[RMDB]
The data come from the RNA Mapping Database (RMDB), library OK2TRN. Structure probing data (2A3 and DMS) for a 177-nucleotide construct. The RNA was probed in 150 mM KOAc, 10 mM MgCl2 and 150 mM bicine (pH 8.5) at 24 C. 2A3 adducts were read by reverse transcription with SuperScript II with manganese. The 2A3 profile rests on 1,466 reads. For DMS the reverse transcriptase was MarathonRT.

RNA sequence: GGGAACGACUCGAGUAGAGUCGAAAACCCUGUGUCAACAACCUGAGAGUGGCCUUGAGUUGCUGGGAGCACCCCAGACUGACAAACAGCAAGAAGAAUAUGGGGACCUCAGUCCUACAACCACAGGGGUAAUGUUGAGGUUCGCCUCAACAUUACCAAAAGAAACAACAACAACAAC
Reactivity to 2A3 in 0.01 (KOAc 150mM, MgCl2 10mM, bicine 150mM(pH8.5), 24C), signal-to-noise 2, nucleotides 027 to 126: c010c030c030u020g100u040g010u030c030a030a020c010a000a040c130c020u080g020a060g000a020g070u040g020g030c020c000u110u030g080a070g120u040u040g070c010u020g010g030g020a120g090c070a300c000c040c000c020a040g000a080c050u060g030a050c020a050a210a010c010a070g120c070a070a120g100a080a000g050a130a040u120a100u260g020g000g000g040a040c000c010u030c010a030g000u050c010c000u000a050c040a030a030c000c020a030c030a060g040g000
Reactivity to DMS in 0.01 (KOAc 150mM, MgCl2 10mM, bicine 150mM(pH8.5), 24C), signal-to-noise 2, nucleotides 027 to 126: c010c010c010u010g040u030g040u000c080a060a110c060a060a200c040c030u000g000a090g000a140g010u000g000g010c050c010u000u000g000a170g000u000u000g010c030u000g010g030g000a140g000c150a130c040c010c000c020a040g000a100c060u000g040a180c180a120a090a170c100a060g000c140a110a080g030a100a100g030a090a120u000a080u000g010g030g000g000a130c070c040u010c040a030g000u000c070c030u000a070c080a020a060c070c020a090c120a100g000g000